[RMDB]
RNA sequence: GGGAACGACUCGAGUAGAGUCGAAAAUCAAGCGAUGGCGUAUUCGAUAGCAGUAGUGCAGUUCCGCGUGCAUUUACAGGAGGCUACAAAGAUCGAUCCAUCGGAUCUGCAUGCUAGCCUGGACUGAAUUUAGGGGAGCUUUCGAGCUCCCCUAAAUAAAAGAAACAACAACAACAAC
Reactivity to DMS in 0.01 (KOAc 150mM, MgCl2 10mM, bicine 150mM(pH8.5), 24C), signal-to-noise 2, nucleotides 027 to 126: u000c090a140a160g000c040g020a070u010g010g020c180g000u020a070u010u000c070g000a060u000a050g050c040a080g030u010a060g020u000g010c020a070g000u000u010c030c050g000c080g020u000g030c080a040u010u000u020a090c070a060g000g000a120g000g000c010u010a150c170a040a120a050g000a060u000c070g020a120u030c020c040a060u000c070g020g000a000u000c020u000g020c160a060u000g010c160u010a070g000c000c000u010g000g000a100c050u000g000a100
The data come from the RNA Mapping Database (RMDB), library OK2TST. An RNA of 177 nucleotides, treated with DMS and read out base by base. Conditions: 150 mM KOAc, 10 mM MgCl2 and 150 mM bicine (pH 8.5), 24 C. DMS adducts were read by reverse transcription with MarathonRT. The DMS profile rests on 1,151 reads.